[RMDB]
RNA sequence: GGGAACGACUCGAGUAGAGUCGAAAAGAAAGAAAGAAAGAAAACUUCCUGCAGAAACUGCUGCCAAUUGUUUGAUGAAUUGCGGUAAGAAGUCAAGGGUUCAUUGGCUGGGAUUAGUAGGUAAGAAGCAUUUCGAUUGUUUCGACAAUCGAAAUGCAAAAGAAACAACAACAACAAC
Reactivity to 2A3 in 0.01 (KOAc 150mM, MgCl2 10mM, bicine 150mM(pH8.5), 24C), signal-to-noise 2, nucleotides 027 to 126: g000a010a070a000g050a030a020a000g070a180a040a000g090a000a250a000a010c000u000u000c000c000u000g020c000a000g080a000a100a000c030u250g030c070u050g080c010c000a040a040u050u000g080u150u190u190g190a130u060g000a000a150u000u090g090c040g030g000u040a090a000g000a060a000g080u000c010a030a010g130g120g060u080u160c000a010u120u010g000g000c000u000g000g000g000a070u070u120a040g020u000a050g000g100u030a200a000g050a020a050
Reactivity to DMS in 0.01 (KOAc 150mM, MgCl2 10mM, bicine 150mM(pH8.5), 24C), signal-to-noise 1, nucleotides 027 to 126: g000a200a120a110g000a010a020a110g010a100a000a100g030a080a200a010a160c110u000u000c000c000u000g000c030a160g000a090a130a070c040u000g000c030u010g010c100c080a080a000u030u000g010u000u090u000g000a060u040g010a040a020u000u000g000c000g010g010u070a030a180g010a070a010g000u000c000a020a050g000g000g040u000u030c040a120u000u000g000g020c000u000g000g000g000a100u010u030a070g010u050a010g020g030u000a080a000g000a160a020

The record gives the reactivity of an RNA of 177 nucleotides to 2A3 and DMS.
Conditions: 150 mM KOAc, 10 mM MgCl2 and 150 mM bicine (pH 8.5), 24 C.
For 2A3, 519 sequencing reads were counted.
The DMS profile rests on 993 reads.
DMS adducts were read by reverse transcription with MarathonRT.